[RMDB]
RNA sequence: GGGAACGACUCGAGUAGAGUCGAAAAAGAUCGAUUACGAUCGAUCAAUGAUGCCCCUCACCCACCUCUGAAGAUCCCAGGUGGGCGAGGGAACGCAGCACGGGAUCACGAGCAGUACGCUGCUCGAAAAAGAACUAGACCUUCGGGUCUAGUUCAACAUUCAAAGUAACUUCGGUUACUUUGAAUGAAAAGAAACAACAACAACAAC
Reactivity to DMS in 0.01 (KOAc 150mM, MgCl2 10mM, bicine 150mM(pH8.5), 24C), signal-to-noise 2, nucleotides 027 to 156: a160g010a020u000c010g010a100u000u000a070c210g070a090u000c000g000a010u000c000a300a100u000g020a150u010g020c030c000c000c020u000c000a020c010c000c000a030c000c010u000c030u000g010a200a100g000a170u000c000c010c000a080g000g000u000g000g020g020c020g020a050g000g000g000a010a010c170g030c070a110g000c070a100c080g020g030g020a110u010c040a280c010g000a020g010c000a000g030u000a080c300g040c020u000g000c000u000c000g030a000a030a090a110a170g020a030a010c020u040a010g010a000c000c020u000u010c300g090g020g020u000c000u000a020g000u000u000c000a030a130
Reactivity to 2A3 in 0.01 (KOAc 150mM, MgCl2 10mM, bicine 150mM(pH8.5), 24C), signal-to-noise 4, nucleotides 027 to 156: a000g000a000u000c000g000a000u040u070a090c170g040a020u000c000g010a000u000c010a000a060u190g080a060u210g090c020c010c010c000u010c010a010c010c000c000a000c010c010u050c050u080g070a090a010g000a020u010c000c000c000a010g000g000u010g000g000g000c000g000a000g010g000g010a050a030c120g040c090a090g030c060a040c100g000g000g000a000u010c000a010c040g000a000g000c010a000g000u070a030c300g050c130u000g000c000u000c000g000a010a000a000a010a010g000a000a000c000u000a000g000a000c010c010u040u100c220g040g000g010u000c000u000a000g000u000u000c000a000a000
Background: Structure probing data (DMS and 2A3) for a 207-nucleotide construct. Values cover nucleotides 27 to 156. For DMS, 3,125 sequencing reads were counted. For 2A3 the reverse transcriptase was SuperScript II with manganese. The RNA was probed in 150 mM KOAc, 10 mM MgCl2 and 150 mM bicine (pH 8.5) at 24 C.